Conditions: 150 mM KOAc, 10 mM MgCl2 and 150 mM bicine (pH 8.5), 24 C. An RNA of 170 nucleotides, treated with DMS and 2A3 and read out base by base.
RNA sequence: GGGAACGACUCGAGUAGAGUCGAAAACUCCUUGCAUGUUGGGGACGAAGCCGCCCCCGGGCGCUCCCCUCGAUCCACCUUCGAGGGGGUUCACACCUCCAACCUGCGGGCCGGCUACUCUUCUUUUAAAGCCCCGUGUUCGCACGGGGCAAAAGAAACAACAACAACAAC
Reactivity to DMS in 0.01 (KOAc 150mM, MgCl2 10mM, bicine 150mM(pH8.5), 24C), signal-to-noise 1, nucleotides 027 to 129: c150u060c000c020u100u100g030c000a000u050g050u000u000g000g000g000g040a090c160g020a070a120g000c060c020g000c160c030c000c130c080g000g000g110c090g000c070u060c080c030c000c030u020c060g080a070u060c000c100a030c210c100u000u000c000g030a060g000g010g020g000g000u040u000c150a240c290a220c000c060u100c040c000a050a090c000c080u050g000c050g000g000g000c130c020g060g060c150u010a090c020u010c010u000u000c020u170u000u000u000a030a230a120
Reactivity to 2A3 in 0.01 (KOAc 150mM, MgCl2 10mM, bicine 150mM(pH8.5), 24C), signal-to-noise 2, nucleotides 027 to 129: c030u010c000c000u000u210g000c000a000u070g000u030u030g020g000g000g000a060c040g130a060a010g070c030c000g100c040c070c000c000c000g030g020g000c040g010c010u070c000c000c030c000u000c000g010a050u050c070c050a040c030c080u020u020c020g000a000g000g000g000g010g020u020u030c060a050c000a000c050c020u040c000c000a010a000c020c000u000g000c000g000g000g010c090c010g090g020c020u050a040c000u000c020u070u020c000u010u040u020u120a110a120a040

2A3 adducts were read by reverse transcription with SuperScript II with manganese. The DMS profile rests on 2,049 reads. The 2A3 profile rests on 2,039 reads.